[RMDB]
RNA sequence: GGGAACGACUCGAGUAGAGUCGAAAAUGGGUAUUCGUACCCAAUCCUGCGUACUACAUCGAGCUAGCGAAUAUCCUACCCACCUAUAUCCCAAAUAGGAUAUAGAGGGAUUCUCGCUUGGACCUCGAUGUAUCGCUCGGCAGUGGUUCGCCACUAAGACUACAGUUCUUUUCGAAGAACUGUAGUCAAAAGAAACAACAACAACAAC
Reactivity to DMS in 0.01 (KOAc 150mM, MgCl2 10mM, bicine 150mM(pH8.5), 24C), signal-to-noise 2, nucleotides 027 to 156: u000g000g000g040u010a030u000u000c200g030u000a030c010c010c020a040a050u010c040c000u000g000c050g020u000a090c080u000a020c060a030u000c010g010a030g020c060u010a040g000c010g000a050a080u000a020u010c020c000u000a050c010c000c050a300c180c000u000a020u000a020u000c000c000c040a040a250a170u010a060g020g010a030u000a000u000a000g000a160g010g000g010a030u000u010c060u000c030g000c030u000u000g060g000a130c280c020u000c020g020a030u000g000u000a010u010c000g020c010u010c030g000g010c050a100g000u000g000g000u000u000c140g010c010c000a100c060u000a100a300
Reactivity to 2A3 in 0.01 (KOAc 150mM, MgCl2 10mM, bicine 150mM(pH8.5), 24C), signal-to-noise 5, nucleotides 027 to 156: u050g010g000g000u040a040u050u170c300g040u050a020c000c000c000a000a050u020c000c000u000g010c000g050u080a130c040u000a010c030a010u010c000g000a000g030c010u020a000g000c000g010a020a020u030a010u100c000c010u010a090c110c090c020a050c030c000u010a000u000a000u010c010c040c060a220a300a190u300a150g010g000a000u000a000u000a000g010a030g000g010g000a000u060u020c060u010c070g010c000u040u080g080g070a090c030c000u000c010g010a000u000g000u010a020u100c020g010c030u030c030g120g020c080a050g020u030g060g040u070u140c160g060c090c020a030c040u070a100a100